[RMDB]
RNA sequence: GGGAACGACUCGAGUAGAGUCGAAAAACUCGUGGCGAGUAGUACGCUACUCGCCACGAGAAUCGUGCGGUUAUAUACCGACGCCCACAAUUCGUGUUGCUCACUUUUCUUUUUCUUUUUCCAUGGAAUGGUUUGAGCGUCAUACGUGGGCCAGAGCCAUAUUGGACAUCUUAGUGCCCUUACAGGAAUAGUCAUAUUGAUACUUUUUCUGUGGGUCGGUAGUUCAGAUAGCUACGCGAGGAUGAGUGUACGCACUCAUCCUCGCGAUAACCAAAUUCGUUUGGUUAAAAAGAAACAACAACAACAAC
Reactivity to DMS in 0.01 (KOAc 150mM, MgCl2 10mM, bicine 150mM(pH8.5), 24C), signal-to-noise 1, nucleotides 027 to 266: a090c010u000c040g030u020g020g030c020g000a020g010u000a020g030u020a150c130g040c000u010a020c020u000c010g060c060c060a010c000g000a010g000a020a020u010c010g000u010g070c000g000g010u040u000a140u010a120u000a020c030c010g020a090c090g010c030c000c000a070c050a200a130u000u010c120g020u020g010u010u000g030c030u010c040a050c130u000u010u010u030c000u010u030u000u010u010c050u000u050u030u070u000c110c100a140u020g030g020a040a030u000g000g000u030u000u020g010a060g020c020g010u000c050a000u000a060c160g040u000g000g010g010c000c130a040g020a100g030c020c010a050u020a120u040u020g000g000a040c010a140u010c030u000u010a100g010u010g010c060c000c020u000u030a000c010a030g040g000a020a000u000a030g010u010c050a220u030a180u020u010g010a150u050a020c010u000u000u000u000u010c000u000g020u000g000g000g010u000c030g000g030u000a060g010u010u010c030a020g010a130u010a080g030c000u010a150c050g060c020g100a000g040g030a040u000g020a100g000u000g000u000a080c130g050c000a010c000u070c010a000u000c000c070u030c000g040c070g000a010